[RMDB]
RNA sequence: GGGAACGACUCGAGUAGAGUCGAAAACAGAUCGUUGCCGAGGUCGACAUCGUGGUUGGCCUCCCACGCGCGCAACCGUUGCACGGCACCGGCGAGACCCUCACCGGGCAGAUACAGCACCUUGGUCUACGCACUGAGGAUUCGUCCUCAGUGCGUAAAAAGAAACAACAACAACAAC
Reactivity to 2A3 in 0.01 (KOAc 150mM, MgCl2 10mM, bicine 150mM(pH8.5), 24C), signal-to-noise 1, nucleotides 027 to 126: c060a030g080a120u080c010g020u070u050g050c030c010g000a020g000g020u040c010g000a000c000a090u160c150g270u140g180g000u040u050g000g020c000c000u030c000c050c010a050c060g040c030g040c000g000c010a030a000c020c050g080u070u100g040c120a060c080g020g000c030a060c120c000g000g000c010g000a050g030a140c020c000c000u000c030a020c000c000g000g000g040c000a010g050a040u100a030c040a020g000c050a060c030c010u070u100g050g000u050c040
Reactivity to DMS in 0.01 (KOAc 150mM, MgCl2 10mM, bicine 150mM(pH8.5), 24C), signal-to-noise 2, nucleotides 027 to 126: c120a120g020a070u010c070g010u000u000g000c040c070g010a040g010g030u010c000g000a050c030a150u010c220g010u030g000g010u000u000g010g000c030c030u010c000c010c030a030c140g020c140g000c060g020c060a080a060c040c070g000u000u000g030c050a070c080g010g000c060a080c020c060g010g030c010g010a060g000a120c060c040c040u010c030a070c040c050g000g000g010c050a030g000a090u000a080c100a050g020c040a090c050c050u000u020g020g030u000c080